Source: RMDB library M2PK50, as collected in RNAgym. Structure probing data (DMS and 2A3) for a 177-nucleotide construct. The RNA was probed in 150 mM KOAc, 10 mM MgCl2 and 150 mM bicine (pH 8.5) at 24 C. DMS adducts were read by reverse transcription with MarathonRT. For 2A3, 1,413 sequencing reads were counted. 2A3 adducts were read by reverse transcription with SuperScript II with manganese.
RNA sequence: GGGAACGACUCGAGUAGAGUCGAAAAGCAAGGAGCUUCGGCUCCUUGCAAAAGAAAGCUCCAAAAGGAGCAAAGGACAUGCAAAGAAAAAGUCCAAAUGGAAAAGUCCGUUCUUCGGAACGGACAAGACUAAGUUGUUGUUCGCAACAACUUAGUCAAAAGAAACAACAACAACAAC
Reactivity to DMS in 0.01 (KOAc 150mM, MgCl2 10mM, bicine 150mM(pH8.5), 24C), signal-to-noise 1, nucleotides 027 to 126: g010c000a010a000g000g030a020g020c000u000u000c170g030g020c010u000c000c000u000u000g030c010a000a050a040a150g000a130a140a170g020c040u000c000c030a000a050a300a160g020g010a010g010c020a000a080a130g020g010a040c010a040u000g010c240a100a110a080g010a080a110a110a090a160g000u000c000c010a020a170a070u010g020g010a160a080a140a080g000u000c000c000g000u000u000c000u000u000c200g030g030a000a010c000g000g000a000c000a030a000
Reactivity to 2A3 in 0.01 (KOAc 150mM, MgCl2 10mM, bicine 150mM(pH8.5), 24C), signal-to-noise 1, nucleotides 027 to 126: g000c010a000a010g020g020a020g020c040u090u130c240g050g000c000u020c000c000u010u000g020c000a000a000a000a000g010a040a040a010g000c010u000c020c010a090a300a110a300g020g000a010g000c000a000a140a000g010g000a000c030a040u160g080c090a280a200a060g080a100a120a100a010a000g010u000c030c000a010a060a090u170g070g000a090a080a030a060g020u000c000c000g010u010u000c000u000u030c160g020g010a000a000c000g000g000a000c000a000a010